RNA sequence: GGGAACGACUCGAGUAGAGUCGAAAACAUGACUCCAGUGGGAAUUGGCAAGUGUCUUAAGUACAUCCUUCAAUGGCAGUUGGCAACACUCAUUUUGGGAGGAGGUGAGUAUAAAGGAAGGUUACCAGAAUUUGUUGACCUUCCUCCACAUUUUGUACGCUCACUCCCAUUUCGAUGGGAGUGAGCGAAAAGAAACAACAACAACAAC
Reactivity to 2A3 in 0.01 (KOAc 150mM, MgCl2 10mM, bicine 150mM(pH8.5), 24C), signal-to-noise 1, nucleotides 027 to 156: c040a080u270g110a030c000u000c000c000a010g010u000g000g020g060a110a070u020u040g140g060c040a020a050g090u000g000u000c000u060u020a000a000g000u050a120c100a110u150c150c030u160u150c080a110a110u060g030g010c060a240g060u000u000g110g040c000a030a000c000a000c000u000c060a030u040u030u030u100g150g010g000a040g010g000a020g040g000u050g000a000g090u170a070u180a190a130a010g030g000a010a010g000g000u000u000a000c030c010a000g170a270a300u240u160u040g010u000u030g010a000c000c000u050u000c000c000u020c000c050a040c000a060u060u230u300u040g070u060a060